The record gives the reactivity of an RNA of 207 nucleotides to 2A3 and DMS.

RNA sequence: GGGAACGACUCGAGUAGAGUCGAAAAGGAAACACAAAUGCAAUAUAAAGGCUAUGAGUUCGAAGAAGUCGACGUGUCCGAGUGGAUGAAGUACGACGCAGAUAAGCAGGCCGCUUACAAUGAAUGGCUGCAAUCCAUCACGUUUGGCGACGCCACCCAUAAUCGGUUCAUUCGUGAACCGAUUAUGAAAAGAAACAACAACAACAAC
Reactivity to 2A3 in 0.01 (KOAc 150mM, MgCl2 10mM, bicine 150mM(pH8.5), 24C), signal-to-noise 6, nucleotides 027 to 156: g040g000a050a060a000c050a010c050a100a100a050u140g010c010a040a040u090a030u080a300a070a020g030g000c010u020a030u080g030a020g050u060u070c030g030a040a020g010a040a000g050u020c020g020a030c030g030u030g040u070c050c050g040a040g040u070g020g020a050u030g050a060a010g020u060a080c060g020a020c030g050c020a010g030a130u060a110a030g020c020a010g040g110c020c030g000c030u060u080a050c080a070a140u110g030a100a040u070g040g010c010u030g020c030a010a030u030c020c010a030u050c010a010c050g010u030u050u140g030g010c020g010a030c070g030c020c020a030c000c000
Reactivity to DMS in 0.01 (KOAc 150mM, MgCl2 10mM, bicine 150mM(pH8.5), 24C), signal-to-noise 4, nucleotides 027 to 156: g010g020a050a070a100c050a130c080a050a080a100u000g030c060a080a160u000a160u000a050a060a090g020g010c020u010a070u000g010a080g020u000u000c040g000a080a080g010a070a060g020u000c040g010a060c020g020u000g030u010c040c020g020a130g020u000g000g010a090u000g020a090a080g010u000a070c030g000a070c030g020c030a120g000a080u000a040a080g020c040a120g050g020c040c040g040c030u000u010a070c070a070a080u010g000a080a060u010g000g010c040u020g000c070a130a070u000c030c040a040u010c070a080c030g020u010u010u000g030g000c050g000a080c020g020c010c030a040c050c030

The reactions ran in a buffer of 150 mM KOAc, 10 mM MgCl2 and 150 mM bicine (pH 8.5), at 24 C. 2A3 adducts were read by reverse transcription with SuperScript II with manganese. The DMS profile rests on 8,123 reads. The data come from the RNA Mapping Database (RMDB), library OK3TST. Reactivities are given for positions 27 through 156.